[RMDB]
RNA sequence: GGGAACGACUCGAGUAGAGUCGAAAAGGAAGGAUUCGUCCUUCCAAAAAACCUUUGUGCCUUUGUCAGCUCGAGUAGCGAGGCCCAUUGGGCUCCCCACCGCUACGAGAGCUUGGAUUUAAGGCACUCUGGUAAAAAAGGUUCGUUCGCGAACCAACUUACAUGGACGAUUCGUCGUCCAUGUAAGAAAAGAAACAACAACAACAAC
Reactivity to DMS in 0.01 (KOAc 150mM, MgCl2 10mM, bicine 150mM(pH8.5), 24C), signal-to-noise 1, nucleotides 027 to 156: g030g000a050a030g000g010a030u000u000c300g000u000c010c000u000u000c010c000a000a040a040a080a110a010c000c020u000u010u030g020u000g040c000c000u000u000u010g010u020c040a180g020c000u000c020g000a300g000u000a040g100c010g060a300g000g040c020c000c000a180u000u000g010g060g000c030u000c160c000c040c140a300c180c010g010c000u000a090c040g010a300g000a020g010c010u010u000g020g020a050u000u000u000a000a030g000g000c020a000c010u000c060u050g000g010u000a000a020a040a020a080a050g000g030u000u000c000g020u000u010c260g050c010g020a000a020c010c010a020a100